[RMDB]
Chemical mapping of a 207-nucleotide RNA with 2A3.
2A3 adducts were read by reverse transcription with SuperScript II with manganese.
2A3 is a SHAPE reagent: it acylates the 2'-hydroxyl of flexible nucleotides of all four kinds.
For 2A3, 892 sequencing reads were counted.
Source: RMDB library M2RFPK, as collected in RNAgym.
RNA sequence: GGGAACGACUCGAGUAGAGUCGAAAAUAGAAGAAGAGGCUAGGUGGUAUUCCGGUGUGGGAUACUUGGUAAUAUGUAACGCUAAUUGCAUAAGAUUGUGGGACGGAAUUUACAGUCUUGGUUUUUAAAAACUUCUCGUAGUUCGCUACGAGAAGAAGAUGCACAGACAGUUCGCUGUCUGUGCAUCAAAAGAAACAACAACAACAAC
Reactivity to 2A3 in 0.01 (KOAc 150mM, MgCl2 10mM, bicine 150mM(pH8.5), 24C), signal-to-noise 2, nucleotides 027 to 156: u100a000g050a100a000g020a050a020g000a000g080g060c070u060a040g060g020u030g020g030u120a080u030u040c030c020g040g050u150g010u130g040g020g010a010u020a090c020u040u080g040g000u080a050a030u080a040u080g040u060a070a000c050g010c130u060a010a140u110u100g000c030a010u020a050a030g030a090u020u090g000u010g020g010g040a010c000g040g010a010a020u040u030u030a110c040a000g010u020c040u050u050g030g050u030u000u000u070u150a060a110a010a010a010c000u000u020c000u000c000g010u000a030g010u030u080c210g000c080u010a010c010g000a000g000a000a020g000a000a010